[RMDB]
RNA sequence: GGGAACGACUCGAGUAGAGUCGAAAAAGCUGGCCAUACGUGGCCAGCAAGCGCUGACCUGGCCCAUGCCCAGGAGCGCCAUUGCGCCGGACGAAUGCCCCUCGGGUGGGGCAAGCAACAUCGGCAAUCUGAGGAACUGUUUCGACAGUUCCUCAGAAAAAGAAACAACAACAACAAC
Reactivity to DMS in 0.01 (KOAc 150mM, MgCl2 10mM, bicine 150mM(pH8.5), 24C), signal-to-noise 2, nucleotides 027 to 126: a060g020c000u000g000g020c000c000a040u030a060c180g050u010g000g030c000c000a040g000c000a010a040g000c020g000c020u000g010a120c000c000u000g020g010c010c130c250a120u020g000c170c010c000a020g000g030a020g000c010g000c020c250a110u090u020g000c140g000c000c000g000g000a040c170g000a100a110u000g000c010c000c000c000u050c250g000g020g010u020g000g020g000g030c000a000a050g000c150a090a300c130a150u020c020g000g020c030a060a100
Reactivity to 2A3 in 0.01 (KOAc 150mM, MgCl2 10mM, bicine 150mM(pH8.5), 24C), signal-to-noise 3, nucleotides 027 to 126: a000g000c000u000g000g000c010c020a040u030a070c300g090u020g000g040c000c000a020g000c000a000a000g000c000g000c000u030g150a080c000c000u000g020g010c040c080c080a140u270g020c020c010c000a000g000g000a000g000c000g000c030c000a120u070u300g050c100g000c010c000g020g020a040c060g040a100a030u040g000c000c000c060c000u110c150g300g020g090u220g010g000g000g000c000a000a000g010c000a010a040c040a100u090c010g000g000c000a020a080
Chemical mapping of a 177-nucleotide RNA with DMS and 2A3. It was measured as part of the RMDB library RFM100. Reactivities are given for positions 27 through 126. For 2A3, 2,007 sequencing reads were counted.